Chemical mapping of a 177-nucleotide RNA with 2A3 and DMS. It was measured as part of the RMDB library TTRDEL. For DMS the reverse transcriptase was MarathonRT.
[RMDB]
RNA sequence: GGGAACGACUCGAGUAGAGUCGAAAAGAUAUGGAAUACUGCGAUAAGCUCGGUGUCGGAAACGACACCCGAGCUUUUGACGCAGUUCCUAAGUCAAAACAGUCAUAACCUUCGGGUUAUGACUGAACAAAUAAAGUGCGUUCGCGCACUUUAUUUGAAAAGAAACAACAACAACAAC
Reactivity to 2A3 in 0.01 (KOAc 150mM, MgCl2 10mM, bicine 150mM(pH8.5), 24C), signal-to-noise 2, nucleotides 027 to 126: g010a030u090a050u160g020g020a080a080u150a250c010u000g000c020g020a030u000a120a000g010c000u000c010g000g040u020g010u000c010g020g020a100a070a070c010g000a000c010a020c010c010c010g000a010g020c010u000u000u000u000g020a000c000g000c000a000g010u010u010c000c000u020a140a040g050u010c060a010a000a090a200c020a010g010u000c000a000u000a000a010c000c000u040u090c300g100g010g000u000u000a000u000g010a000c020u000g000a010a000
Reactivity to DMS in 0.01 (KOAc 150mM, MgCl2 10mM, bicine 150mM(pH8.5), 24C), signal-to-noise 4, nucleotides 027 to 126: g010a020u000a300u020g000g000a030a050u010a080c030u000g000c000g010a130u010a020a010g000c010u000c000g000g010u000g010u000c000g010g010a100a100a160c000g010a020c010a010c060c040c030g000a000g000c010u000u000u000u000g010a140c060g000c000a010g000u000u000c020c000u000a070a180g000u010c040a100a050a100a210c010a000g000u000c000a010u000a000a000c000c000u000u010c210g040g010g000u000u000a000u000g000a000c000u010g000a030a090